The record gives the reactivity of an RNA of 177 nucleotides to DMS and 2A3. 2A3 adducts were read by reverse transcription with SuperScript II with manganese. Conditions: 150 mM KOAc, 10 mM MgCl2 and 150 mM bicine (pH 8.5), 24 C. Source: RMDB library OK2TRN, as collected in RNAgym.

[RMDB]
RNA sequence: GGGAACGACUCGAGUAGAGUCGAAAACUGCCUUUGCCUCCCCAGGAACCUGGUUUCUGACAAGCAGGACUCACUGGCUCAGUGUGCAGACUUUAGGAGCAGCCUGCCAUCCCAGGACGCCAUGCUGCACGUAGAAUUCCUUCGGGAAUUCUACGUGAAAAGAAACAACAACAACAAC
Reactivity to DMS in 0.01 (KOAc 150mM, MgCl2 10mM, bicine 150mM(pH8.5), 24C), signal-to-noise 2, nucleotides 027 to 126: c060u000g020c020c050u000u000u000g030c000c030u000c040c040c020c030a090g020g000a060a070c070c050u000g010g000u000u000u000c040u000g030a100c160a100a090g010c020a010g000g000a090c000u010c090a140c040u000g000g020c070u000c120a090g020u010g020u010g000c020a060g010a040c060u010u000u010a130g030g020a080g040c090a040g010c010c000u020g010c020c020a080u000c070c040c030a130g000g050a090c150g000c040c020a050u000g010c010u010g030
Reactivity to 2A3 in 0.01 (KOAc 150mM, MgCl2 10mM, bicine 150mM(pH8.5), 24C), signal-to-noise 1, nucleotides 027 to 126: c000u070g010c000c000u050u050u020g020c020c010u000c000c020c010c000a000g040g040a020a000c020c070u050g000g100u020u040u060c080u060g010a020c010a050a040g000c010a010g010g030a140c010u000c050a060c040u030g050g030c000u010c100a060g030u090g050u110g150c050a040g020a220c000u160u130u250a170g050g020a050g020c010a000g040c000c000u010g000c000c020a050u090c020c020c000a020g010g020a010c010g000c020c000a030u060g000c040u050g000